[RMDB]
RNA sequence: GGGAACGACUCGAGUAGAGUCGAAAAUCGGCGUCGGCGCCGACGAAAUGUGGGAUAUCCGCAAUCGGGGCGUCAUCCCUGCGGGCGCGCUCCCCCGCGUCCGAGCCUUCGUCGACGCAAUCGAGGCGCGUGUCGCAGGGUUCGCCCUGCGACACGCAAAAGAAACAACAACAACAAC
Reactivity to DMS in 0.01 (KOAc 150mM, MgCl2 10mM, bicine 150mM(pH8.5), 24C), signal-to-noise 1, nucleotides 027 to 126: u000c090g000g000c000g000u030c230g020g000c030g030c000c020g050a030c120g000a160a080a080u000g070u010g060g020g000a120u070a050u040c040c030g080c000a120a130u000c070g130g000g000g000c000g000u050c000a100u050c000c000c000u020g000c010g000g000g000c000g030c010g000c120u020c060c000c030c120c070g000c000g010u000c000c070g030a000g050c090c230u070u000c030g000u030c060g030a010c030g010c000a200a180u030c170g040a030g000g000c040
Reactivity to 2A3 in 0.01 (KOAc 150mM, MgCl2 10mM, bicine 150mM(pH8.5), 24C), signal-to-noise 2, nucleotides 027 to 126: u140c010g060g030c000g040u080c050g120g120c000g010c020c020g000a030c010g010a020a110a040u180g020u080g000g060g000a150u130a110u260c000c000g000c040a030a080u140c080g000g000g000g070c040g030u060c010a020u050c000c000c000u000g000c000g000g000g000c000g000c010g030c050u130c040c000c000c010c010g040c000g010u020c010c030g000a020g000c000c030u080u060c020g010u020c040g000a000c000g000c000a010a130u080c100g030a040g000g050c010